RNA sequence: GGGAACGACUCGAGUAGAGUCGAAAAGAUAUGGACCACGGGCUCGAUAAGAUGCCAUCGGAAACGAUGGGCAUCUUUUGACGAGCAUGUGGUCCUAAGUCAAAUCGACAGGGUUCGCCCUGUCGAAGAUAAAUCGAAACUUCGGUUUCGAUUUAUCAAAAGAAACAACAACAACAAC
Reactivity to 2A3 in 0.01 (KOAc 150mM, MgCl2 10mM, bicine 150mM(pH8.5), 24C), signal-to-noise 2, nucleotides 027 to 126: g010a000u030a010u090g000g010a000c010c000a020c020g010g030g010c010u010c010g070a100u050a300a000g000a000u000g000c010c000a000u000c000g000g020a050a010a020c010g010a020u040g040g230g050c000a010u010c000u020u000u010u070g110a050c000g000a000g030c000a010u020g000u000g000g000u000c000c000u010a010a000g000u000c020a020a020a130u050c000g000a000c010a000g070g000g060u090u150c260g140c030c010c000u000g010u000c000g000a010a000
Reactivity to DMS in 0.01 (KOAc 150mM, MgCl2 10mM, bicine 150mM(pH8.5), 24C), signal-to-noise 3, nucleotides 027 to 126: g010a020u000a200u010g000g000a020c000c000a000c000g010g010g010c000u000c000g020a180u020a010a020g000a010u000g010c010c000a010u000c000g010g000a070a040a090c000g010a010u000g030g000g000c000a000u000c000u000u000u000u000g020a210c130g020a010g000c000a020u010g020u000g010g000u000c000c000u010a000a080g010u010c010a100a140a170u000c010g010a010c000a010g010g010g010u000u020c300g020c000c000c000u000g010u000c000g000a010a040